Source: RMDB library OK2TRN, as collected in RNAgym.
An RNA of 177 nucleotides, treated with DMS and 2A3 and read out base by base.
The reactions ran in a buffer of 150 mM KOAc, 10 mM MgCl2 and 150 mM bicine (pH 8.5), at 24 C.
Reactivities are given for positions 27 through 126.

RNA sequence: GGGAACGACUCGAGUAGAGUCGAAAAUAGUGCCAGAGCGAGCGCACGGCGUCGGGCAGCGGAACAACCGAGUUGCGACCGACCGCUUGACCGACCGCAUGCCGAUCGAUCGCGGUCUCGGACGCGACGCUAUUCAUAACUUCGGUUAUGAAUAGCGAAAAGAAACAACAACAACAAC
Reactivity to DMS in 0.01 (KOAc 150mM, MgCl2 10mM, bicine 150mM(pH8.5), 24C), signal-to-noise 8, nucleotides 027 to 126: u010a070g020u000g010c020c050a110g000a120g020c040g010a080g010c150g010c070a070c060g010g010c030g010u000c030g010g010g010c040a040g000c020g010g010a110a100c200a090a110c110c070g010a100g020u000u000g010c060g010a110c030c020g000a120c010c000g000c010u000u000g020a030c010c000g000a020c050c200g000c050a100u000g010c100c010g000a050u000c020g000a060u000c010g000c000g000g000u000c060u000c070g010g010a100c020g000c020g010a100
Reactivity to 2A3 in 0.01 (KOAc 150mM, MgCl2 10mM, bicine 150mM(pH8.5), 24C), signal-to-noise 6, nucleotides 027 to 126: u100a020g070u040g040c010c020a030g020a030g090c040g020a020g020c020g020c040a010c050g040g000c020g010u020c010g000g020g000c020a010g010c030g020g020a090a040c030a030a010c060c030g060a080g080u040u070g030c080g050a030c010c010g010a010c010c000g000c000u090u190g030a030c000c010g010a010c020c040g050c090a090u210g050c060c010g030a090u050c020g000a010u010c010g000c030g000g060u020c060u020c050g030g020a050c010g000c020g030a010